[RMDB]
RNA sequence: GGGAACGACUCGAGUAGAGUCGAAAAAGUUAGGUUCGCUAUGGUGCAACUCUUUAAGGCAAUAACGAACUAAUUCUAAGCAACUAAUGGAGAAAUGCCAGGGUCACUAUCUAGCCAUAAUAGUGCUGUAAGUGACUUAGAUUCGUCUAAGUCACAAGAUUCUUGCUGGUUUCGACCAGCAAGAAUCAAAAGAAACAACAACAACAAC
Reactivity to 2A3 in 0.01 (KOAc 150mM, MgCl2 10mM, bicine 150mM(pH8.5), 24C), signal-to-noise 3, nucleotides 027 to 156: a000g090u060u050a060g020g130u010u020c010g000c050u050a010u090g050g110u090g070c080a130a200c110u140c050u130u190u150a110a070g030g020c030a040a050u050a120a060c010g010a030a000c030u030a010a010u060u080c050u080a080a000g030c030a040a090c040u080a040a000u170g060g000a010g100a070a100a080u060g000c050c030a080g000g020g010u040c020a000c040u060a020u070c010u030a050g030c000c000a030u080a120a070u040a080g020u000g010c040u020g020u070a200a030g010u000g000a000c000u000u000a000g000a000u010u060c050g000u030c160u010a000a000g000u000c000a000c000a000a000
Structure probing data (2A3) for a 207-nucleotide construct. As a SHAPE reagent, 2A3 marks flexible, mostly unpaired nucleotides at the ribose 2'-OH. It was measured as part of the RMDB library M2RFPK. The reactions ran in a buffer of 150 mM KOAc, 10 mM MgCl2 and 150 mM bicine (pH 8.5), at 24 C.